Chemical mapping of a 177-nucleotide RNA with DMS. Conditions: 150 mM KOAc, 10 mM MgCl2 and 150 mM bicine (pH 8.5), 24 C. For DMS the reverse transcriptase was MarathonRT. The data come from the RNA Mapping Database (RMDB), library OK2TST.
RNA sequence: GGGAACGACUCGAGUAGAGUCGAAAAUUGGAGCGCUGCACCUCCUCGAAGAGCGGCUGAGCCUUGACGCCCAUCUCGACCAGCAGGCCGAAGACCACGUAGAGGAUAUCGAUGCAGGCAUCGACCGGUGGAAUAGGCGUUUCGACGCCUAUUCCACAAAAGAAACAACAACAACAAC
Reactivity to DMS in 0.01 (KOAc 150mM, MgCl2 10mM, bicine 150mM(pH8.5), 24C), signal-to-noise 1, nucleotides 027 to 126: u020u000g040g010a030g010c070g020c020u010g010c050a070c000c060u000c000c000u000c020g020a080a280g000a040g000c010g010g000c030u010g000a100g030c070c000u020u010g010a040c140g030c040c020c020a270u000c050u000c040g000a090c020c050a060g000c180a060g030g000c020c050g050a110a060g000a200c080c080a050c100g010u000a150g000a050g000g010a100u000a070u040c100g020a090u000g010c080a030g000g010c010a030u000c030g010a160c080c070g000